[RMDB]
An RNA of 177 nucleotides, treated with DMS and 2A3 and read out base by base. The reactions ran in a buffer of 150 mM KOAc, 10 mM MgCl2 and 150 mM bicine (pH 8.5), at 24 C. DMS adducts were read by reverse transcription with MarathonRT. For 2A3 the reverse transcriptase was SuperScript II with manganese.
RNA sequence: GGGAACGACUCGAGUAGAGUCGAAAAGAGGAGUCAUUCGUGACUCCUCAAAGGGUGCUCAACUCUCCCGCUCAAGUCCGAGAGCCUUCGGACCCAAAAGAAUGCUGUUCCUGUUCGCAGGAACAAAGCUUAAUGAUCUCUUCGGAGAUCAUUAAGCAAAAGAAACAACAACAACAAC
Reactivity to DMS in 0.01 (KOAc 150mM, MgCl2 10mM, bicine 150mM(pH8.5), 24C), signal-to-noise 2, nucleotides 027 to 126: g000a000g010g000a020g000u010c000a040u000u000c260g010u010g000a010c000u000c000c000u010c000a000a060a060g000g000g000u000g010c190u010c230a100a040c040u000c020u000c010c000c000g020c080u000c060a140a190g010u000c010c000g010a050g000a140g010c170c070u000u010c020g000g010a020c000c080c060a040a060a060a100g010a040a080u010g000c070u000g000u000u000c000c000u000g000u000u010c170g030c010a000g030g010a000a000c000a020a030a060
Reactivity to 2A3 in 0.01 (KOAc 150mM, MgCl2 10mM, bicine 150mM(pH8.5), 24C), signal-to-noise 3, nucleotides 027 to 126: g010a000g000g000a000g010u000c010a010u080u060c120g080u060g000a000c000u000c010c000u010c000a000a000a000g000g020g000u040g030c100u090c250a010a040c010u000c000u010c030c010c000g030c030u100c050a080a050g000u020c000c000g030a010g030a150g220c040c040u040u000c000g010g010a020c000c010c000a090a150a020a010g130a120a080u180g050c070u040g040u010u000c010c000u010g030u010u040c260g000c080a010g010g020a000a000c010a010a000a000